[RMDB]
RNA sequence: GGGAACGACUCGAGUAGAGUCGAAAAACCGAUAGCAAAUGUCACUAUCGAAAAUAAGUCGCCUACGACAGAGGACACCGGAAUGACAGCUGAGAAGCACUUUUAUCAGGAUAUGAAUAAGCCCGUGUCCCUACCAACUUUUCGAAGUUGGUAGGGAAAAAGAAACAACAACAACAAC
Reactivity to 2A3 in 0.01 (KOAc 150mM, MgCl2 10mM, bicine 150mM(pH8.5), 24C), signal-to-noise 4, nucleotides 027 to 126: a000c010c010g010a030u010a000g060c110a060a000a110u240g090u070c030a030c020u020a010u030c040g080a080a050a010a030u180a120a000g050u030c000g060c040c000u020a030c060g130a010c030a050g080a020g060g000a000c000a030c020c010g020g040a110a040u090g030a010c060a020g010c010u020g050a010g000a080a020g060c020a070c050u010u050u060u050a120u110c010a020g040g040a040u030a030u220g060a070a050u130a100a020g020c020c020c000g040u030g050
Reactivity to DMS in 0.01 (KOAc 150mM, MgCl2 10mM, bicine 150mM(pH8.5), 24C), signal-to-noise 3, nucleotides 027 to 126: a120c160c010g000a050u010a010g000c100a080a070a130u040g010u010c090a060c010u000a030u000c030g000a180a080a060a080u030a100a060g010u010c070g000c040c030u010a080c140g000a110c130a090g010a060g030g000a050c050a040c070c080g060g010a040a080u000g000a160c060a030g000c050u010g000a110g010a130a080g000c150a060c050u000u000u030u000a080u000c050a060g000g000a090u010a080u030g010a020a100u010a020a070g020c010c000c010g010u060g000
Structure probing data (2A3 and DMS) for a 177-nucleotide construct.
Source: RMDB library OK1LIB, as collected in RNAgym.